[RMDB]
RNA sequence: GGGAACGACUCGAGUAGAGUCGAAAAGAAGACGUGACGAAAAGUCACGUCAAUACAGCGACUACGCAACGCUGAAAAACACAACAAAAGUGUAAAAGCGUAGCAGGAUCGAGAGAUCCUGAAAAGAGAGGAUCACUGGAUUCGUCCAGUGAUCCUCAAAAGAAACAACAACAACAAC
Reactivity to DMS in 0.01 (KOAc 150mM, MgCl2 10mM, bicine 150mM(pH8.5), 24C), signal-to-noise 1, nucleotides 027 to 126: g090a270a100g000a000c000g040u000g000a000c000g000a120a020a070a130g000u000c000a000c000g030u000c000a060a020u030a290c020a090g000c000g000a300c000u000a030c010g040c020a020a000c000g000c000u000g000a050a080a070a160a080c000a000c040a050a070c230a140a080a140a120g050u000g000u000a000a080a100a040g010c020g000u000a000g020c000a000g000g020a040u000c000g000a200g070a090g000a000u000c000c000u000g000a000a000a050a080g070a150
Reactivity to 2A3 in 0.01 (KOAc 150mM, MgCl2 10mM, bicine 150mM(pH8.5), 24C), signal-to-noise 2, nucleotides 027 to 126: g230a060a030g000a000c000g010u000g000a020c060g050a220a110a070a000g000u000c010a000c000g000u000c000a000a000u130a010c020a010g000c020g060a020c000u030a000c000g020c070a220a000c020g000c020u010g060a020a010a010a020a000c040a010c080a060a120c110a000a100a060a110g010u020g000u010a080a060a030a000g010c000g000u000a000g020c000a000g000g000a010u010c000g020a010g020a010g000a160u000c000c000u010g020a020a000a000a010g120a010

About this RNA
An RNA of 177 nucleotides, treated with DMS and 2A3 and read out base by base. High DMS reactivity at an A or C suggests that its Watson-Crick edge is free. The DMS profile rests on 1,398 reads. Source: RMDB library OK1LIB, as collected in RNAgym. For DMS the reverse transcriptase was MarathonRT. Conditions: 150 mM KOAc, 10 mM MgCl2 and 150 mM bicine (pH 8.5), 24 C.